[RMDB]
RNA sequence: GGGAACGACUCGAGUAGAGUCGAAAAGCUGGAGAAAAAGGCGGAUGGCCGUGAUUUGAUUUUGGUUUCGCCUACGGAUGGAAGCGACCUAGCGCUGAUUAACACUCAUUUAUCCGGGGAGAACUCCACCUGCACGUGACUUCGGUCACGUGCAGGUAAAAGAAACAACAACAACAAC
Reactivity to DMS in 0.01 (KOAc 150mM, MgCl2 10mM, bicine 150mM(pH8.5), 24C), signal-to-noise 1, nucleotides 027 to 126: g000c000u000g000g000a050g000a110a000a050a240a230g000g030c030g000g000a100u060g000g000c050c000g000u000g110a130u000u030u050g000a280u050u000u000u090g000g000u000u000u000c060g030c060c000u010a040c000g030g020a000u000g000g000a210a100g050c000g000a150c020c180u040a020g000c000g000c090u000g060a120u000u000a210a110c100a150c250u030c140a100u000u000u040a070u000c030c000g000g000g000g000a190g000a000a020c010u010c000c020
Reactivity to 2A3 in 0.01 (KOAc 150mM, MgCl2 10mM, bicine 150mM(pH8.5), 24C), signal-to-noise 1, nucleotides 027 to 126: g040c070u000g020g020a080g060a150a180a000a000a050g040g010c020g070g000a080u080g180g100c000c000g080u180g000a120u100u040u000g220a120u030u000u300u000g000g000u030u000u160c010g000c000c000u000a080c000g010g020a050u000g030g010a050a060g080c010g030a180c030c000u090a150g180c000g000c080u080g000a020u030u030a070a000c000a030c000u050c080a080u000u080u180a000u010c000c000g000g000g040g000a070g030a030a090c050u000c000c000
Chemical mapping of a 177-nucleotide RNA with DMS and 2A3. Conditions: 150 mM KOAc, 10 mM MgCl2 and 150 mM bicine (pH 8.5), 24 C.